[RMDB]
RNA sequence: GGGAACGACUCGAGUAGAGUCGAAAACCGGCCUGUUUCGACAGGCCGGAGCGGGAUAUGGAGCCUGUUGUCAGAGUGGGUGGUCGGAAACGACCACAUACUCUUGGAUUUAUGGUGAGGCUCCUAAGUCAAUGUUUCCAUGUUUCGACAUGGAAAAAGAUUUCAUGUAGUUCGCUACAUGAAAUCUAAAAGAAACAACAACAACAAC
Reactivity to DMS in 0.01 (KOAc 150mM, MgCl2 10mM, bicine 150mM(pH8.5), 24C), signal-to-noise 1, nucleotides 027 to 156: c000c000g030g020c000c000u000g010u010u010u000c210g010a120c010a070g000g020c020c000g020g000a000g030c080g020g000g040a200u000a060u020g000g000a080g060c010c010u010g020u000u010g020u000c050a080g010a050g040u000g030g010g070u000g020g000u000c000g020g010a140a170a270c020g010a020c000c000a010c000a000u030a010c020u000c030u000u000g000g000a160u000u010u000a070u020g000g000u010g000a090g010g000c000u000c020c000u000a020a090g000u000c050a080a120u010g020u000u000u000c000c000a010u010g010u000u000u000c260g010a120c000a010u000g000g010a000a000a010a130
Reactivity to 2A3 in 0.01 (KOAc 150mM, MgCl2 10mM, bicine 150mM(pH8.5), 24C), signal-to-noise 3, nucleotides 027 to 156: c020c000g000g000c030c000u050g030u030u100u150c180g060a030c000a000g010g050c000c000g020g020a010g040c080g000g130g000a040u060a080u170g000g010a000g000c000c010u120g030u240u130g080u110c030a000g000a010g000u000g000g040g010u000g000g000u000c010g010g000a080a050a080c020g000a000c000c000a000c000a000u000a000c000u000c000u010u100g080g000a020u000u220u210a250u300g240g040u210g170a030g000g000c000u000c000c000u000a020a000g020u040c070a060a080u200g050u030u030u000c000c000a000u000g040u000u110u100c160g020a030c010a000u000g050g090a040a010a020a000